RNA sequence: GGGAACGACUCGAGUAGAGUCGAAAACAUCAGUCGUUCGCGACUGAUGAAACGUGCAAGCGCUGCACGAAAAAGUCGAUCGAAUACCGAUCGACAAGCCCUAAAGAUAGGCCUUCGGGCCUAUCAACUAAACCUAGGUGUUCGCACCUAGGUUUAGAAAAGAAACAACAACAACAAC
Reactivity to DMS in 0.01 (KOAc 150mM, MgCl2 10mM, bicine 150mM(pH8.5), 24C), signal-to-noise 2, nucleotides 027 to 126: c010a000u000c000a000g010u000c000g010u010u010c190g040c000g030a030c000u010g000a000u000g000a010a060a130c020g020u000g000c000a040a130g020c280g010c190u000g000c000a000c010g000a030a020a040a120a080g010u000c000g000a010u000c000g010a300a100u010a140c280c010g030a000u000c000g000a000c010a040a080g010c020c010c010u000a100a100a110g000a010u000a000g000g010c000c030u000u000c270g020g000g010c000c000u000a000u000c000a050a180
Reactivity to 2A3 in 0.01 (KOAc 150mM, MgCl2 10mM, bicine 150mM(pH8.5), 24C), signal-to-noise 2, nucleotides 027 to 126: c000a000u000c000a000g010u000c000g020u060u090c210g000c010g090a000c000u000g000a010u000g010a010a000a000c000g000u010g020c040a210a300g090c200g070c290u030g000c000a000c030g060a090a010a000a010a000g010u010c010g000a010u000c000g000a070a040u090a300c110c060g020a000u000c000g000a000c010a020a030g040c020c000c000u090a190a170a000g000a000u000a000g000g020c000c010u010u140c290g010g020g000c000c000u000a000u000c000a010a010
Conditions: 150 mM KOAc, 10 mM MgCl2 and 150 mM bicine (pH 8.5), 24 C. This 177-nucleotide RNA was probed chemically with DMS and 2A3. Source: RMDB library M2PK50, as collected in RNAgym.